An RNA of 177 nucleotides, treated with DMS and 2A3 and read out base by base.
RNA sequence: GGGAACGACUCGAGUAGAGUCGAAAAGAAAGAAACUGGAGAAAUGAUGAGAAAUCAGAUAAAUCUUAGGACACCUUCUGACACAGAUUCUGUGUAUGAGAAUGACAUCAUAUUCUGAUCUUCAGAAGCCCAUAACAUAGUUCGCUAUGUUAUGGGCAAAAGAAACAACAACAACAAC
Reactivity to DMS in 0.01 (KOAc 150mM, MgCl2 10mM, bicine 150mM(pH8.5), 24C), signal-to-noise 3, nucleotides 027 to 126: g000a090a100a090g010a100a070a150c020u000g000g000a030g000a010a100a090u030g000a040u000g000a140g000a040a110a160u000c020a000g010a140u030a040a120a090u010c010u000u010a050g000g010a110c070a070c060c110u000u000c010u000g000a090c270a070c080a030g000a070u010u020c070u030g000u000g000u010a070u020g000a030g010a080a020u010g000a090c160a050u010c020a010u010a080u010u000c000u010g000a140u000c030u020u000c010a000g000a110a140
Reactivity to 2A3 in 0.01 (KOAc 150mM, MgCl2 10mM, bicine 150mM(pH8.5), 24C), signal-to-noise 7, nucleotides 027 to 126: g060a010a090a000g040a030a080a010c020u020g020g010a030g030a020a070a050u080g030a010u040g010a030g060a070a100a020u040c020a010g010a030u110a060a120a060u050c050u040u100a060g100g050a010c010a040c040c020u030u020c010u030g070a040c020a010c020a120g160a300u290u110c040u090g020u010g020u020a040u080g040a010g040a080a130u120g030a050c030a050u030c000a010u020a040u210u020c030u040g050a080u010c000u020u010c010a010g020a070a010